[RMDB]
RNA sequence: GGGAACGACUCGAGUAGAGUCGAAAAGUUUUAGACAGGGCGGACAAGUGCGUCAGGAUACCGAUGCACGAUGCAACCGAGUCUUUAAAUGUCGCGAUGGCGGCGACAAUCUGCCUGUUUGAACAGAACUGAGUGGAGGAUUCGUCCUCCACUCAGUAAAAGAAACAACAACAACAAC
Reactivity to 2A3 in 0.01 (KOAc 150mM, MgCl2 10mM, bicine 150mM(pH8.5), 24C), signal-to-noise 3, nucleotides 027 to 126: g000u040u010u050u080a000g010a000c010a000g040g040g120c040g060g000a060c050a150a010g000u000g010c000g020u000c030a010g070g130a180u140a160c050c190g000a000u000g000c000a000c030g070a070u080g010c100a140a020c090c050g080a020g000u000c000u000u010u030a080a110a110u090g000u020c030g010c020g170a130u260g230g060c160g060g000c000g060a000c030a050a070u040c070u090g050c000c000u020g020u000u040u010g000a020a010c050a090g010a050
Reactivity to DMS in 0.01 (KOAc 150mM, MgCl2 10mM, bicine 150mM(pH8.5), 24C), signal-to-noise 3, nucleotides 027 to 126: g000u020u000u020u010a010g000a010c010a070g000g020g020c070g010g010a230c090a050a190g000u010g000c020g010u000c000a080g000g020a180u030a100c120c100g010a000u000g000c000a010c020g000a100u040g010c130a270a120c060c090g000a180g010u000c040u010u040u030a030a090a130u000g040u000c000g000c000g000a180u020g000g010c210g000g000c000g000a000c020a090a100u010c040u000g000c000c030u000g000u010u010u000g020a010a000c040a130g000a100